[RMDB]
RNA sequence: GGGAACGACUCGAGUAGAGUCGAAAAGUCAGCUUGUUCGCAAGCUGACAAAGUGGACACACCCACACCCAGGCGAAGCCGUGUCAAAAUGGGUGUGGGUAAAAAGGACACUGUUCGCAGUGUCCAAGUUUAUUGCUGUGUUCGCACAGCAAUAAACAAAAGAAACAACAACAACAAC
Reactivity to DMS in 0.01 (KOAc 150mM, MgCl2 10mM, bicine 150mM(pH8.5), 24C), signal-to-noise 4, nucleotides 027 to 126: g010u000c000a000g020c010u000u000g000u000u010c210g030c000a020a020g000c000u000g000a000c000a010a030a080g010u000g010g010a110c110a080c190a090c020c000c010a000c020a030c010c000c000a050g010g000c200g010a080a080g010c090c120g000u020g010u010c100a050a060a180a180u000g010g010g010u000g020u000g000g010g010u000a000a000a020a050a040g000g000a010c000a010c020u000g010u000u000c170g010c010a010g000u000g010u010c000c010a010a010
Reactivity to 2A3 in 0.01 (KOAc 150mM, MgCl2 10mM, bicine 150mM(pH8.5), 24C), signal-to-noise 2, nucleotides 027 to 126: g010u010c010a000g000c010u020u000g020u050u090c140g020c090a000a000g000c000u000g000a010c000a000a000a000g110u070g090g050a010c030a000c010a010c110c010c010a000c000a000c010c000c020a020g000g030c110g080a120a090g070c120c090g110u110g060u170c040a230a200a080a130u060g020g000g010u030g010u010g020g000g020u000a000a000a000a000a010g010g000a000c000a010c020u000g030u020u020c140g000c170a010g000u000g000u000c010c000a000a020